[RMDB]
RNA sequence: GGGAACGACUCGAGUAGAGUCGAAAAGGCGCAGCAGGUUCGGUCGAGCGGUAGGGAUAGCGGUCAUUUCUUCUUCCUUCCGGUUGUGGGCCUCUGCCCGUUACGAUUCAAGUUCGGGACCUCGAUAGGAGCGAUCCGUUUCCCGAUCACCGCGAACCACGUAUACGCAGUUCGCUGCGUAUACGUGAAAAGAAACAACAACAACAAC
Reactivity to 2A3 in 0.01 (KOAc 150mM, MgCl2 10mM, bicine 150mM(pH8.5), 24C), signal-to-noise 5, nucleotides 027 to 156: g040g000c080g000c030a030g000c020a010g000g020u050u060c030g010g160u130c020g040a040g070c000g020g020u070a020g020g010g040a100u130a110g040c040g010g050u100c090a120u140u160u050c020u040u000c000u010u000c000c000u040u010c010c010g230g050u050u020g030u090g000g010g000c000c000u020c010u020g000c000c000c000g000u020u070a020c010g000a020u000u080c090a230a050g100u030u010c000g020g030g010a070c030c010u010c030g120a250u150a300g180g000a020g040c050g040a050u040c030c010g000u040u050u000c000c010c000g010a080u100c080a050c070c070g060c010g030a010a010c020
Reactivity to DMS in 0.01 (KOAc 150mM, MgCl2 10mM, bicine 150mM(pH8.5), 24C), signal-to-noise 2, nucleotides 027 to 156: g000g000c090g010c030a080g020c080a030g030g030u000u010c010g000g040u000c030g000a100g040c020g010g000u010a050g040g000g010a060u010a030g010c140g010g000u000c150a130u000u010u000c050u010u000c050u000u000c010c000u000u000c020c040g050g040u000u000g020u020g000g000g010c020c040u010c050u010g000c000c040c000g000u010u000a110c020g020a170u000u000c080a060a190g010u000u000c000g010g010g010a060c060c020u000c060g020a180u000a040g010g020a060g020c080g010a050u020c010c010g010u010u000u000c010c000c000g010a080u000c030a070c040c030g000c030g010a080a130c080